The record gives the reactivity of an RNA of 177 nucleotides to DMS and 2A3. As a SHAPE reagent, 2A3 marks flexible, mostly unpaired nucleotides at the ribose 2'-OH. The DMS profile rests on 69,316 reads. Reactivities are given for positions 27 through 126. The reactions ran in a buffer of 150 mM KOAc, 10 mM MgCl2 and 150 mM bicine (pH 8.5), at 24 C. For DMS the reverse transcriptase was MarathonRT. The 2A3 profile rests on 63,642 reads.

RNA sequence: GGGAACGACUCGAGUAGAGUCGAAAAGACAGGUUCACUUCAUCGACAGAGCAGAGUGAGCCUCUCGGUGAUGGGAACUGGACGAUAUCCACUUUACUGUGGAUUGUAAAUUGGUACGUUCGGUCAAGAUAUUCUGGAUAUUCGUAUCUAGGAUAUCAAAAGAAACAACAACAACAAC
Reactivity to DMS in 0.01 (KOAc 150mM, MgCl2 10mM, bicine 150mM(pH8.5), 24C), signal-to-noise 9, nucleotides 027 to 126: g020a030c100a080g000g010u000u000c000a010c000u000u000c030a160u000c020g000a110c300a070g010a070g010c190a120g010a080g020u030g000a050g000c020c010u000c070u000c010g010g010u000g000a050u010g000g000g010a080a010c000u000g010g000a020c020g010a120u000a030u030c000c000a010c070u000u000u020a040c040u010g020u030g020g010a100u020u010g010u000a010a020a080u010u000g000g000u010a040c020g000u000u000c000g010g010u000c060a100a130
Reactivity to 2A3 in 0.01 (KOAc 150mM, MgCl2 10mM, bicine 150mM(pH8.5), 24C), signal-to-noise 9, nucleotides 027 to 126: g030a010c030a030g000g020u010u000c000a010c020u060u050c020a070u030c020g110a080c110a140g060a040g050c050a020g070a070g160u120g040a020g020c000c000u000c000u000c000g030g020u060g030a070u070g020g030g030a020a010c000u010g010g010a000c010g040a060u020a030u100c000c000a010c000u020u060u070a070c080u070g100u210g300g080a140u070u040g010u010a030a060a040u040u030g030g010u040a010c010g000u000u010c010g000g020u030c040a050a020